RNA sequence: GGGAACGACUCGAGUAGAGUCGAAAACGUCCCCGUCGUACAGAAUGGUAACAUAUCUCUCCAAAUAUCUGAGCUUGGGUAUACGGGGAAACCAAACCCCUUGGGAAGAUUGGGUAUAUGGCUAAAUUACAUCGAUUGUACUUCGGUACAAUCGAAACACAUCUAGCCACUUCGGUGGCUAGAUGUGAAAAGAAACAACAACAACAAC
Reactivity to 2A3 in 0.01 (KOAc 150mM, MgCl2 10mM, bicine 150mM(pH8.5), 24C), signal-to-noise 1, nucleotides 027 to 156: c020g110u060c000c000c080c000g110u040c040g000u040a080c060a080g140a220a040u110g080g000u100a120a020c000a080u040a130u020c030u010c010u000c130c000a040a110a180u170a130u100c040u050g000a000g110c020u050u120g000g000g010u050a010u010a140c100g010g000g020g000a010a080a010c000c010a050a030a030c000c000c020c010u020u010g020g000g000a060a030g060a100u040u110g000g040g020u040a040u000a010u060g000g010c040u140a070a140a110u260u080a020c030a090u020c030g000a010u000u010g010u000a000c000u000u060c180g060g000u000a000c010a000a010u000c020g000a000a000a000
The record gives the reactivity of an RNA of 207 nucleotides to 2A3. The RNA was probed in 150 mM KOAc, 10 mM MgCl2 and 150 mM bicine (pH 8.5) at 24 C.